[RMDB]
RNA sequence: GGGAACGACUCGAGUAGAGUCGAAAAGCGUCCUGGUUCGCCAGGACGCAAAUAAAUGGUAGACUGAGACCGUCUAACUCAGAUAAGCAGAAAUAGACGGAAAAACUGACUUGUUCGCAAGUCAGAACUGUUAUAUUCAGUUCGCUGAAUAUAACAGAAAAGAAACAACAACAACAAC
Reactivity to 2A3 in 0.01 (KOAc 150mM, MgCl2 10mM, bicine 150mM(pH8.5), 24C), signal-to-noise 8, nucleotides 027 to 126: g000c000g010u000c000c000u000g010g040u050u060c210g030c060c010a000g010g010a000c000g000c000a000a000a000u020a000a030a030u130g080g030u060a040g030a140c010u010g010a000g020a060c010c010g000u000c000u030a200a130c000u000c000a010g040a230u140a130a040g100c090a020g080a060a120a020u020a010g000a000c000g000g030a040a060a010a000a000c000u000g000a000c000u010u010g020u060u090c170g020c090a000a000g000u000c000a000g000a020a020
Reactivity to DMS in 0.01 (KOAc 150mM, MgCl2 10mM, bicine 150mM(pH8.5), 24C), signal-to-noise 6, nucleotides 027 to 126: g020c010g010u000c000c000u000g010g010u000u010c210g020c000c000a010g010g010a010c000g010c010a000a030a040u000a070a070a080u010g010g010u010a090g010a200c030u000g000a030g010a130c010c010g000u000c010u000a030a100c030u000c010a020g000a150u010a070a120g020c210a080g010a040a060a130u000a010g000a020c000g000g010a080a040a050a090a150c000u000g000a000c000u000u000g010u000u020c180g020c010a000a010g000u000c000a010g000a050a100